[RMDB]
RNA sequence: GGGAACGACUCGAGUAGAGUCGAAAAAAGGUACGUGGCCGGGUGGUGGUGGCCGCCGACACCGACGAGGAAACGCUGAAAGCCGCCGUUCUGACCGACGAAAAGGUCCAGGCAUUCUUGGCUGGUGUGCUGAUGACACGUUCGCGUGUCAUCAGCAAAAAGAAACAACAACAACAAC
Reactivity to DMS in 0.01 (KOAc 150mM, MgCl2 10mM, bicine 150mM(pH8.5), 24C), signal-to-noise 2, nucleotides 027 to 126: a060a060g000g020u010a060c090g020u010g010g020c030c000g000g010g020u000g000g040u050g030g030u010g000g000c030c000g030c010c020g000a070c070a110c020c000g000a070c060g010a150g040g000a080a020a150c200g010c040u000g010a070a140a080g000c000c020g030c100c020g000u010u020c050u030g000a090c120c020g000a120c100g020a080a130a080a130g000g000u000c010c080a150g000g020c150a060u030u040c030u020u000g070g000c050u000g000g020u000g020
Reactivity to 2A3 in 0.01 (KOAc 150mM, MgCl2 10mM, bicine 150mM(pH8.5), 24C), signal-to-noise 2, nucleotides 027 to 126: a000a050g150g000u100a080c150g050u160g010g000c000c000g050g000g060u080g000g150u020g020g030u040g040g000c010c010g040c010c000g050a010c000a030c000c000g060a080c040g010a030g070g060a020a010a010c120g000c000u020g040a080a080a000g000c030c000g000c040c030g020u120u000c020u040g030a030c030c060g030a060c100g130a190a140a000a000g020g000u080c090c000a020g030g000c020a040u060u060c000u110u130g060g000c010u020g000g080u120g010